[RMDB]
RNA sequence: GGGAACGACUCGAGUAGAGUCGAAAACCGUGACGCUCUCUUGUCAUCAUCACCUUCUUCUUGUCUGAACUCAUCAACAUUUCAGCCAAAUUACUGUGCUGCUAAGUCACUGGGAAGAUCAGGACCCCUUGUUAAUAGGGUUCGCCCUAUUAACAAGAAAAGAAACAACAACAACAAC
Reactivity to 2A3 in 0.01 (KOAc 150mM, MgCl2 10mM, bicine 150mM(pH8.5), 24C), signal-to-noise 9, nucleotides 027 to 126: c010c010g030u050g050a040c040g010c030u010c000u000c010u070u070g040u040c000a030u020c000a020u040c010a060c020c010u030u040c010u050u030c010u040u100g040u030c020u040g040a070a050c010u010c050a090u050c030a070a090c020a090u040u090u070c010a010g000c000c010a060a080a090u140u080a110c070u030g070u130g060c010u010g010c020u070a080a010g030u050c020a010c120u020g000g040g020a070a040g030a090u060c030a020g050g030a060c000c000c000
Reactivity to DMS in 0.01 (KOAc 150mM, MgCl2 10mM, bicine 150mM(pH8.5), 24C), signal-to-noise 7, nucleotides 027 to 126: c020c020g010u000g010a130c100g000c060u000c020u000c050u000u000g010u000c030a060u000c060a060u000c050a050c050c020u000u000c030u000u000c040u000u000g010u010c040u000g010a080a090c090u000c060a040u010c070a050a080c100a090u010u000u000c040a030g020c010c030a040a080a120u000u000a070c160u000g020u000g010c010u000g010c120u000a040a090g000u000c040a070c070u000g000g000g000a070a050g010a080u000c040a060g000g000a170c020c030c030